This 177-nucleotide RNA was probed chemically with DMS and 2A3. The RNA was probed in 150 mM KOAc, 10 mM MgCl2 and 150 mM bicine (pH 8.5) at 24 C. DMS adducts were read by reverse transcription with MarathonRT. Source: RMDB library OK2TRN, as collected in RNAgym.
[RMDB]
RNA sequence: GGGAACGACUCGAGUAGAGUCGAAAAGACGGCCGAGGCGCGAUCCGUCUCUAUGAUCGCGUGUGCGCGCGCGCGCGCUCGUACGUAUGAUCUGAUCACGUACUCAGAUCUGGCCGCGCAUGGCCGAACGUGACAUGAGUUUCGACUCAUGUCACGUAAAAGAAACAACAACAACAAC
Reactivity to DMS in 0.01 (KOAc 150mM, MgCl2 10mM, bicine 150mM(pH8.5), 24C), signal-to-noise 3, nucleotides 027 to 126: g010a150c010g000g010c030c020g030a170g030g020c020g020c010g010a060u000c010c100g010u000c050u000c080u010a030u000g000a010u000c010g000c010g030u000g010u000g000c000g020c100g010c100g000c050g010c050g000c010g000c090u010c110g020u000a050c110g010u050a060u030g000a010u010c060u000g000a030u000c020a160c220g020u010a080c240u010c020a000g000a020u000c020u000g000g010c240c000g010c020g000c020a090u000g000g030c000c010g000a080
Reactivity to 2A3 in 0.01 (KOAc 150mM, MgCl2 10mM, bicine 150mM(pH8.5), 24C), signal-to-noise 2, nucleotides 027 to 126: g070a020c020g020g000c030c010g090a170g150g080c000g020c000g000a030u030c040c020g100u040c020u000c020u110a070u130g000a000u020c010g000c000g030u020g000u000g000c120g010c010g000c050g000c000g040c010g000c020g010c030u040c080g070u110a090c040g050u130a100u220g000a010u000c040u030g020a030u060c080a020c300g090u130a060c070u020c040a000g000a020u020c020u060g060g000c020c000g000c000g010c010a060u100g010g000c020c020g000a050